An RNA of 177 nucleotides, treated with DMS and 2A3 and read out base by base. 2A3 adducts were read by reverse transcription with SuperScript II with manganese. The RNA was probed in 150 mM KOAc, 10 mM MgCl2 and 150 mM bicine (pH 8.5) at 24 C.

[RMDB]
RNA sequence: GGGAACGACUCGAGUAGAGUCGAAAAUGUGCAGGCAGACAGCUCGGCCACUUCCUAGCAGGUCACAUUGGUCUGUGCUUCUGUUUCCUCCUCAGAUAAGUGAAGGGAUUCAAGGGUCUGGGUGUGGCUUAGCACAGUGUUUCGACACUGUGCUAAGAAAAGAAACAACAACAACAAC
Reactivity to DMS in 0.01 (KOAc 150mM, MgCl2 10mM, bicine 150mM(pH8.5), 24C), signal-to-noise 4, nucleotides 027 to 126: u000g020u000g000c070a080g020g010c030a080g010a090c140a100g010c050u010c080g010g000c060c030a050c110u000u010c030c030u000a110g020c100a080g000g010u000c050a110c170a100u010u010g020g000u000c020u010g020u000g010c060u000u000c050u000g010u000u000u000c000c000u000c040c010u000c030a070g000a070u000a060a080g020u010g020a070a060g000g010g000a160u000u000c100a070a070g000g010g000u000c090u010g010g010g000u010g030u010g000g020
Reactivity to 2A3 in 0.01 (KOAc 150mM, MgCl2 10mM, bicine 150mM(pH8.5), 24C), signal-to-noise 2, nucleotides 027 to 126: u140g020u040g040c030a020g050g000c010a000g020a110c030a020g020c010u010c030g020g010c030c020a050c030u120u060c010c010u030a040g030c100a030g010g040u030c040a020c030a230u080u170g070g000u050c060u050g040u040g040c000u050u030c020u030g060u030u070u040c010c010u050c000c030u030c020a030g010a150u140a180a040g070u050g130a050a050g050g050g030a080u110u060c070a040a050g090g000g020u030c060u060g000g030g000u140g020u030g050g030